Chemical mapping of a 177-nucleotide RNA with DMS and 2A3. Source: RMDB library OK1LIB, as collected in RNAgym. The reactions ran in a buffer of 150 mM KOAc, 10 mM MgCl2 and 150 mM bicine (pH 8.5), at 24 C.
RNA sequence: GGGAACGACUCGAGUAGAGUCGAAAAUGUAAAUAAGAAUUCCGGUCUUUUCCGGAGCCACCAAGUGGAAUGCUACGUGCAUAAAUGCACGUAGCUAAAGACCCGAAGGCUAGCAAUAGCUAGCCGAAGGGUCGCAGUAGUUCGCUACUGCGACCCUAAAAGAAACAACAACAACAAC
Reactivity to DMS in 0.01 (KOAc 150mM, MgCl2 10mM, bicine 150mM(pH8.5), 24C), signal-to-noise 2, nucleotides 027 to 126: u010g000u020a090a090a150u010a060a130g000a180a180u040u000c000c020g000g000u020c300u020u020u030u020c030c000g000g000a020g000c030c030a040c020c120a110a130g000u000g000g010a110a050u030g010c000u010a000c000g020u000g020c010a070u050a100a130a130u010g020c020a000c000g000u030a000g010c000u000a010a050a090g000a120c010c020c010g050a070a120g020g060c000u020a020g000c020a260a100u040a100g000c000u010a000g000c000c000g000a010
Reactivity to 2A3 in 0.01 (KOAc 150mM, MgCl2 10mM, bicine 150mM(pH8.5), 24C), signal-to-noise 5, nucleotides 027 to 126: u070g000u050a040a120a140u120a210a130g090a080a110u110u010c000c000g020g020u030c120u050u150u080u030c010c010g000g000a000g020c000c000a020c060c090a130a110g030u050g030g050a080a080u070g000c010u000a000c010g030u000g000c020a080u150a300a240a030u220g000c000a000c000g000u000a000g000c000u000a000a000a010g000a020c000c000c000g070a090a020g000g010c000u000a000g000c010a080a170u050a300g000c010u000a000g000c000c000g000a010